The data come from the RNA Mapping Database (RMDB), library OK2TRN. Structure probing data (DMS and 2A3) for a 177-nucleotide construct. For DMS, 4,910 sequencing reads were counted. For DMS the reverse transcriptase was MarathonRT. Reactivities are given for positions 27 through 126.
RNA sequence: GGGAACGACUCGAGUAGAGUCGAAAAGCGUUGAACAGCAAGGUCGUCCUAAUGGACCAACAGGGAUUAGGUACUCCUUGUGAGUCCUACUUAAAUCAGGCUAAAGCUAUUCGCAAUAAAUUUAUACUAUUCUUACAUGGUUCGCCAUGUAAGAAUAAAAAGAAACAACAACAACAAC
Reactivity to DMS in 0.01 (KOAc 150mM, MgCl2 10mM, bicine 150mM(pH8.5), 24C), signal-to-noise 6, nucleotides 027 to 126: g030c160g010u000u010g010a050a050c060a050g010c020a050a300g010g000u000c050g010u010c070c020u000a100a130u000g000g010a030c010c070a120a040c070a050g000g010g000a030u000u000a100g020g020u010a100c270u000c000c000u000u020g010u010g000a300g000u000c010c000u000a110c210u000u000a040a070a050u000c150a090g000g000c020u000a030a160a210g010c030u000a050u000u010c020g000c070a060a060u010a050a070a100u010u010u000a080u020a190c090
Reactivity to 2A3 in 0.01 (KOAc 150mM, MgCl2 10mM, bicine 150mM(pH8.5), 24C), signal-to-noise 5, nucleotides 027 to 126: g050c020g020u060u090g030a090a010c020a030g000c010a030a110g020g000u020c010g030u040c040c000u070a120a090u200g010g030a010c000c020a030a040c030a050g040g000g020a030u100u140a080g200g080u130a090c040u010c010c000u040u020g000u010g020a020g010u000c000c000u020a070c010u050u170a030a080a120u120c060a060g010g000c020u060a110a040a040g000c000u020a030u050u040c030g000c030a010a050u170a130a080a040u210u270u120a180u050a080c030